[RMDB]
RNA sequence: GGGAACGACUCGAGUAGAGUCGAAAAGGAUGAGAACGCUGCGCUAGAACUGCUCCUGACUGCUGUAUAGCAUGAAAAUUCUGAUGGUGCCUGCCUCCUUAGAGAAAGAGGAAUCCAGACAUCAAAGGUUAUACCGUCUUUUCGAAGACGGUAUAACAAAAGAAACAACAACAACAAC
Reactivity to DMS in 0.01 (KOAc 150mM, MgCl2 10mM, bicine 150mM(pH8.5), 24C), signal-to-noise 7, nucleotides 027 to 126: g010g010a070u010g000a130g000a080a090c090g020c040u010g010c060g020c050u010a050g010a080a110c070u000g010c050u000c030c020u000g000a150c120u000g000c010u010g020u010a060u010a060g020c030a060u010g010a070a080a070a130u000u010c060u000g010a170u000g010g000u000g010c010c020u000g010c300c030u000c010c020u000u000a090g020a160g010a060a090a100g010a030g000g010a140a060u010c140c020a060g010a060c060a030u000c040a040a090a110g010
Reactivity to 2A3 in 0.01 (KOAc 150mM, MgCl2 10mM, bicine 150mM(pH8.5), 24C), signal-to-noise 5, nucleotides 027 to 126: g050g010a070u100g030a020g010a130a010c040g010c050u030g000c030g010c050u040a020g030a110a030c030u050g000c010u020c010c010u060g090a100c020u030g050c010u010g050u160a090u180a120g030c030a020u100g090a050a090a030a040u130u060c030u040g060a110u060g020g000u010g020c010c000u010g010c000c000u020c000c010u060u040a100g030a020g050a160a090a000g020a000g030g000a010a010u060c050c000a000g040a050c010a010u050c030a080a060a020g110